[RMDB]
RNA sequence: GGGAACGACUCGAGUAGAGUCGAAAACCGCCACCAGCCAACUGAAAAAGGCCGACCCGAGUCAGAAACCCGACCCGGCCAAGUUCGUGCCCUUGGAAGCUGUGACGGACCUCCAGGAGCAAAUCGCCGCUCUGACCGCACGCCUCAAUGGUGGCGACUGUUAAAAUUGAUUCGUCAAUUUUAACAGAAAAGAAACAACAACAACAAC
Reactivity to 2A3 in 0.01 (KOAc 150mM, MgCl2 10mM, bicine 150mM(pH8.5), 24C), signal-to-noise 3, nucleotides 027 to 156: c030c000g000c000c000a000c000c010a030g110c040c050a120a110c180u110g090a090a070a010a080a080g010g020c010c000g000a020c060c020c010g010a020g020u000c010a060g130a270a260a120c050c070c060g010a010c000c000c000g030g000c080c070a080a010g020u080u050c020g030u120g030c010c000c020u040u060g030g020a040a010g000c080u150g080u050g070a210c020g000g050a070c000c060u060c060c040a070g060g000a020g010c020a040a130a140u230c130g090c170c040g000c040u020c010u010g030a030c000c010g000c000a000c010g010c000c040u040c030a040a120u030g000g000u000g000g000c010g010a010
Reactivity to DMS in 0.01 (KOAc 150mM, MgCl2 10mM, bicine 150mM(pH8.5), 24C), signal-to-noise 1, nucleotides 027 to 156: c050c000g030c040c000a030c010c000a110g030c080c090a030a190c020u010g000a270a090a020a120a100g030g010c050c000g000a050c170c000c000g020a000g010u000c020a190g000a260a140a210c110c010c020g000a080c010c050c000g000g020c120c070a100a070g000u020u000c010g070u020g040c010c000c000u000u000g000g020a270a040g020c010u000g020u000g000a110c130g000g010a070c000c020u000c020c050a190g010g010a050g060c000a070a080a150u030c050g060c110c070g000c010u000c020u000g000a080c030c000g000c080a120c040g020c000c010u000c050a050a110u000g000g040u000g000g000c000g010a040